Chemical mapping of a 207-nucleotide RNA with 2A3. The RNA was probed in 150 mM KOAc, 10 mM MgCl2 and 150 mM bicine (pH 8.5) at 24 C. Values are in units of 0.01, from 0 to 300, in steps of 10. For 2A3, 1,852 sequencing reads were counted. Source: RMDB library RNAMAK, as collected in RNAgym.

RNA sequence: GGGAACGACUCGAGUAGAGUCGAAAAGGACAUUCGCUGGGCACGAUGGUAGUGGUAGGGAGCUGAGUACUGAAGCGCGCACGGUACCAGCGAGGAUCUACCACGAGAGUAGUGCCUGUGCUGAAGCGCGCACGGCAACCGAAAGGUGCGUUGGCAACCAUCGUUAUACCUUCGGGUAUAACGAUGGAAAAGAAACAACAACAACAAC
Reactivity to 2A3 in 0.01 (KOAc 150mM, MgCl2 10mM, bicine 150mM(pH8.5), 24C), signal-to-noise 1, nucleotides 027 to 156: g120g030a040c050a110u090u050c090g050c100u120g000g000g000c010a000c020g060a090u000g040g030u010a010g000u000g000g020u000a000g000g000g000a000g040c000u000g000a030g100u010a000c010u000g040a270a050g010c000g020c000g000c030a070c030g010g000u010a000c000c010a020g010c000g030a080g010g000a000u000c010u000a000c000c010a010c020g000a010g000a000g000u020a000g000u000g000c000c000u000g000u010g000c010u020g040a130a040g000c010g000c010g000c010a010c010g010g000c000a030a070c010c010g030a130a030a010g080g010u030g000c030g000u070u090g040g000c030a070a020